[RMDB]
This 177-nucleotide RNA was probed chemically with DMS and 2A3.
As a SHAPE reagent, 2A3 marks flexible, mostly unpaired nucleotides at the ribose 2'-OH.
The reactions ran in a buffer of 150 mM KOAc, 10 mM MgCl2 and 150 mM bicine (pH 8.5), at 24 C.
Source: RMDB library OK1LIB, as collected in RNAgym.
RNA sequence: GGGAACGACUCGAGUAGAGUCGAAAAGGGCAAAGGGAUGCCAUUUAUGCAUGGGGACCUUGGAGUCCCGCUGCUAAUGAUGGGUUGCUAUUCACAAUUAACACCCCUGACUCUGAUAGUAGCUAUCCGGUUUUCAGUUAUUCGUAACUGAAAACCGAAAAGAAACAACAACAACAAC
Reactivity to DMS in 0.01 (KOAc 150mM, MgCl2 10mM, bicine 150mM(pH8.5), 24C), signal-to-noise 7, nucleotides 027 to 126: g010g000g010c130a050a060a030g000g010g010a090u010g000c010c010a010u000u000u020a070u020g010c010a010u020g010g000g010g010a010c000c010u040u040g040g010a140g010u000c000c000c000g020c050u000g010c000u010a130a060u050g010a030u000g000g020g000u010u010g000c100u020a100u020u020c150a130c120a070a050u010u020a110a150c110a100c070c000c000c000u000g000a120c050u000c020u000g000a140u010a070g010u010a060g010c040u000a070u020c060
Reactivity to 2A3 in 0.01 (KOAc 150mM, MgCl2 10mM, bicine 150mM(pH8.5), 24C), signal-to-noise 8, nucleotides 027 to 126: g020g010g020c060a060a020a040g080g000g020a040u040g080c010c000a010u030u080u030a110u080g010c020a030u130g010g000g010g010a020c030c050u160u210g130g030a220g060u010c030c000c020g000c000u010g000c010u030a080a090u210g060a010u010g010g010g040u080u060g060c050u100a100u210u120c090a020c030a130a120u140u060a120a010c010a090c020c010c000c000u010g030a070c020u000c020u090g040a030u020a080g080u060a020g060c030u020a050u110c020